About this RNA:
The record gives the reactivity of an RNA of 307 nucleotides to DMS and 2A3. For 2A3, 4,293 sequencing reads were counted. For DMS the reverse transcriptase was MarathonRT. Reactivities are given for positions 27 through 266.
RNA sequence: GGGAACGACUCGAGUAGAGUCGAAAACGUAUCGGUGACGAUACGAGGAACAUCUUCGGAUGUUCCAAGGCGAACGUACGCGUUCGCCAACACCGUGACGUGAGUCACGGUGAGCUGAACUUAAGCAUAAAGCGGAGUCGAGUUGUUUGCAGCUCUAAGCUACGGUGAUCGUCGAAGGGGCGAAAGACAAGAUGGGGAAGCUCCGUUUCAAUGUUGAGCUUGACUCUAGUUGUGGGGAGUAAAGUUACCACAUCGUGAGACAGGUUAGCUCCUGCUUCGGCAGGAGCAAAAGAAACAACAACAACAAC
Reactivity to DMS in 0.01 (KOAc 150mM, MgCl2 10mM, bicine 150mM(pH8.5), 24C), signal-to-noise 3, nucleotides 027 to 266: c000g000u010a000u010c000g000g010u030g000a160c010g010a010u000a000c010g020a140g000g000a010a010c010a010u000c000u000u020c210g010g000a010u000g000u020u000c000c000a100a070g000g010c000g040a010a010c030g050u010a080c240g030c010g030u000u000c000g050c000c010a070a150c050a020c000c000g020u000g000a000c000g020u000g000a200g030u000c000a010c020g000g010u000g030a030g020c100u000g010a110a070c140u010u020a120a090g010c050a100u010a070a100a060g000c020g010g000a030g010u000c070g020a150g010u000u000g010u010u000u000g010c220a300g000c020u000c030u000a080a210g020c050u020a050c010g000g000u020g010a090u010c040g040u010c060g040a170a180g010g000g000g000c030g000a040a300a040g010a050c040a020a080g010a100u000g000g000g010g010a170a200g000c010u000c020c030g020u000u000u010c130a080a050u000g000u010u000g000a060g010c000u000u000g010a060c010u000c010u000a140g020u000u000g030u010g000g020g010g010a140g010u010a050a080a150g000u020u050a140c010c000a020c000a010u000c030g000u000g020a040g030a120c020a010g000g010u010u010a120
Reactivity to 2A3 in 0.01 (KOAc 150mM, MgCl2 10mM, bicine 150mM(pH8.5), 24C), signal-to-noise 5, nucleotides 027 to 266: c000g000u000a000u000c010g000g080u080g080a010c010g000a000u000a000c000g000a090g010g000a000a010c010a000u010c020u050u090c280g170g000a000u000g000u000u000c000c000a000a090g000g010c000g000a010a000c000g000u060a040c300g020c010g090u000u000c000g000c000c000a000a010c010a000c010c010g000u010g000a000c020g110u130g120a070g000u000c000a000c010g010g000u000g000a030g000c100u110g030a050a140c010u070u170a120a010g010c010a050u100a140a060a000g000c000g010g010a000g010u110c090g060a090g220u030u020g040u020u070u050g070c080a030g010c010u010c000u040a120a060g060c020u030a010c000g040g090u180g130a180u300c030g010u000c030g030a080a090g020g000g000g010c010g040a110a010a000g000a000c010a010a030g080a140u250g020g020g000g040a000a030g020c000u000c000c000g000u030u040u070c070a130a120u060g040u050u180g060a010g010c000u030u050g020a070c010u010c030u030a050g020u010u010g010u000g010g020g010g020a120g060u250a110a140a060g070u110u160a110c010c010a010c000a000u020c010g040u030g010a030g020a040c020a020g060g120u120u150a020
The reactions ran in a buffer of 150 mM KOAc, 10 mM MgCl2 and 150 mM bicine (pH 8.5), at 24 C.
For DMS, 6,169 sequencing reads were counted.
Source: RMDB library POS240, as collected in RNAgym.